[RMDB]
RNA sequence: GGGAACGACUCGAGUAGAGUCGAAAAGAUAUGGACCGUGUCAGGACAUGCCUGGAGGGUCGGAAACGACCCUACAGGCAACAGCCUGCACGGUCCUAAGUCAAAGAGUUAUGUUCGCAUAACUCAAGAAUGGUAUGUUGUUCGCAACAUACCAUUCAAAAGAAACAACAACAACAAC
Reactivity to DMS in 0.01 (KOAc 150mM, MgCl2 10mM, bicine 150mM(pH8.5), 24C), signal-to-noise 3, nucleotides 027 to 126: g010a020u010a150u000g000g000a020c010c010g020u010g000u020c010a010g010g010a030c160a220u000g020c000c010u000g000g010a020g020g010g010u010c010g040g010a030a010a090c010g020a020c010c000c000u000a020c000a000g000g000c000a000a010c180a150g020c000c000u010g000c010a000c020g000g010u000c000c000u000a000a050g020u000c020a110a110a170g000a020g020u000u000a000u010g000u010u010c280g020c010a020u010a000a010c000u000c020a140a080
Reactivity to 2A3 in 0.01 (KOAc 150mM, MgCl2 10mM, bicine 150mM(pH8.5), 24C), signal-to-noise 1, nucleotides 027 to 126: g010a010u060a030u040g020g010a000c000c000g020u030g210u300c070a000g000g000a050c150a210u300g040c030c010u010g010g030a000g050g000g000u000c010g000g020a040a020a000c000g000a020c010c040c040u010a010c000a000g010g000c010a000a000c010a000g000c000c000u000g010c030a000c020g000g000u000c000c000u000a000a000g010u010c000a000a000a180g000a000g000u010u010a000u000g050u070u130c300g000c130a000u000a010a010c000u020c030a000a030